[RMDB]
RNA sequence: GGGAACGACUCGAGUAGAGUCGAAAAGAUAUGGAACCAGAAGCCUUUUGACGCUCGAUCCGUCGGAAACGACGGCAGAGAGCGAUAAGGCUCUGGUUCCUAAGUCAAACCUCCCUUCGGGGAGGAACAGAUAGCACAACUUCGGUUGUGCUAUCUGAAAAGAAACAACAACAACAAC
Reactivity to DMS in 0.01 (KOAc 150mM, MgCl2 10mM, bicine 150mM(pH8.5), 24C), signal-to-noise 2, nucleotides 027 to 126: g010a020u000a300u010g000g030a020a010c000c000a000g000a070a100g010c000c000u010u000u000u000g050a220c070g030c000u000c010g020a300u000c000c000g030u000c010g000g000a100a090a160c030g000a020c000g000g000c230a020g000a300g010a000g000c000g020a100u000a020a020g000g000c000u020c000u000g000g000u000u000c000c010u000a000a040g010u000c050a090a170a230c000c000u000c000c000c000u000u030c260g050g000g000g010a010g010g000a000a040
Reactivity to 2A3 in 0.01 (KOAc 150mM, MgCl2 10mM, bicine 150mM(pH8.5), 24C), signal-to-noise 1, nucleotides 027 to 126: g020a000u020a000u090g020g000a030a020c010c000a030g100a210a040g000c000c020u080u050u130u270g300a170c200g010c000u060c000g070a070u010c010c000g000u030c020g000g010a020a070a010c030g010a000c030g020g040c040a000g060a000g020a000g020c000g000a010u030a010a000g020g020c030u020c010u000g000g000u000u000c000c000u010a010a000g010u000c000a030a050a090c010c000u010c000c010c000u030u090c300g080g000g010g000a000g010g000a010a010